An RNA of 177 nucleotides, treated with DMS and read out base by base. For DMS, 2,170 sequencing reads were counted. DMS adducts were read by reverse transcription with MarathonRT.

[RMDB]
RNA sequence: GGGAACGACUCGAGUAGAGUCGAAAAAUUGAUGCGAAGGCGGGACGGAGAAGGCUAUGUUGGCCGGGCGACGGUUGUCCCGGUUUAAGCGUGUAGGCUGGUUUUCCAGGCAAAUCCGGAAAUUGAAUCAUGUCAUGUUGUUCGCAACAUGACAUGAAAAAGAAACAACAACAACAAC
Reactivity to DMS in 0.01 (KOAc 150mM, MgCl2 10mM, bicine 150mM(pH8.5), 24C), signal-to-noise 2, nucleotides 027 to 126: a090u000u000g000a080u000g010c050g010a120a100g020g000c050g000g010g020a100c090g000g000a070g020a150a090g010g010c050u000a040u000g020u010u010g000g030c000c000g000g000g020c300g000a070c090g020g010u010u010g000u000c010c010c000g020g000u010u000u000a040a100g010c040g000u010g030u000a070g000g010c010u000g010g000u000u010u000u000c000c010a190g020g000c070a040a030a090u000c030c010g010g000a040a070a100u020u000g010a090a150